[RMDB]
Chemical mapping of a 177-nucleotide RNA with DMS and 2A3.

RNA sequence: GGGAACGACUCGAGUAGAGUCGAAAAUUCGUGCGCCCCGCACCUGUGACGAUCUACGUCACCGUGAACGUCGCCAAUCUGUCGACAUUGCCGAGUACCUACGUGCAGAGCGUGCAGAAUGCGGUCGCGUGAUGUCGGGAUUCGUCCCGACAUCACGAAAAGAAACAACAACAACAAC
Reactivity to DMS in 0.01 (KOAc 150mM, MgCl2 10mM, bicine 150mM(pH8.5), 24C), signal-to-noise 2, nucleotides 027 to 126: u000u000c120g000u000g030c010g020c030c020c010c170g000c020a020c040c100u030g000u000g020a020c010g000a220u000c200u010a110c050g000u000c150a050c020c120g030u020g000a110a080c090g010u000c020g030c050c180a040a110u000c120u000g000u000c030g000a020c030a050u000u000g020c040c020g000a280g000u000a080c080c100u000a080c140g030u000g010c020a030g000a050g000c010g010u000g000c010a070g010a050a130u010g000c040g000g000u000c080g010
Reactivity to 2A3 in 0.01 (KOAc 150mM, MgCl2 10mM, bicine 150mM(pH8.5), 24C), signal-to-noise 2, nucleotides 027 to 126: u050u000c020g000u030g030c010g010c000c030c020c040g020c020a000c000c020u040g020u020g050a030c000g030a050u110c080u230a080c010g010u010c020a020c000c010g050u070g100a070a020c040g020u040c010g020c020c010a040a140u060c100u090g040u030c010g030a140c040a120u050u100g000c010c000g020a020g040u070a130c030c030u090a070c040g030u090g110c000a010g000a010g050c030g000u070g020c000a010g040a110a010u060g010c010g010g070u120c020g010
For 2A3 the reverse transcriptase was SuperScript II with manganese. The DMS profile rests on 1,485 reads. The RNA was probed in 150 mM KOAc, 10 mM MgCl2 and 150 mM bicine (pH 8.5) at 24 C. The data come from the RNA Mapping Database (RMDB), library OK2TST.